An RNA of 177 nucleotides, treated with 2A3 and DMS and read out base by base. Source: RMDB library OK2TST, as collected in RNAgym. For DMS, 1,669 sequencing reads were counted.

[RMDB]
RNA sequence: GGGAACGACUCGAGUAGAGUCGAAAAUAGCCGAUCUUCUGCAACCAUUGCAACCAAUUUUGGACCUGAGGGGACUGGCUGGGGGCUGUCGGCGACGGCUGGUCGGAACUGGCUUCCAGCGCGUCGACGCUCACCCUGAGUUCGCUCAGGGUGAGCGAAAAGAAACAACAACAACAAC
Reactivity to 2A3 in 0.01 (KOAc 150mM, MgCl2 10mM, bicine 150mM(pH8.5), 24C), signal-to-noise 1, nucleotides 027 to 126: u040a010g130c030c020g090a090u010c040u100u050c070u090g050c000a060a030c000c030a160u030u170g000c030a090a060c040c040a160a180u090u020u050u210g020g020a030c000c020u030g040a050g030g090g000g000a000c030u070g100g070c030u000g010g000g000g010g000c050u040g000u070c010g000g000c010g000a090c040g220g050c030u030g010g000u010c080g000g030a180a090c080u080g120g000c000u030u000c000c000a010g000c020g000c010g000u000c010g020a040
Reactivity to DMS in 0.01 (KOAc 150mM, MgCl2 10mM, bicine 150mM(pH8.5), 24C), signal-to-noise 1, nucleotides 027 to 126: u010a070g030c050c040g040a080u020c050u000u000c100u000g000c030a090a140c060c050a050u010u000g000c090a090a230c090c100a070a110u000u010u010u010g010g000a090c040c040u000g000a030g000g000g000g000a020c020u000g000g070c050u000g000g000g010g020g000c100u000g030u000c000g010g000c050g000a080c030g020g000c010u010g010g000u000c020g000g010a050a120c190u010g010g000c040u000u010c010c000a010g000c010g010c030g010u000c010g010a040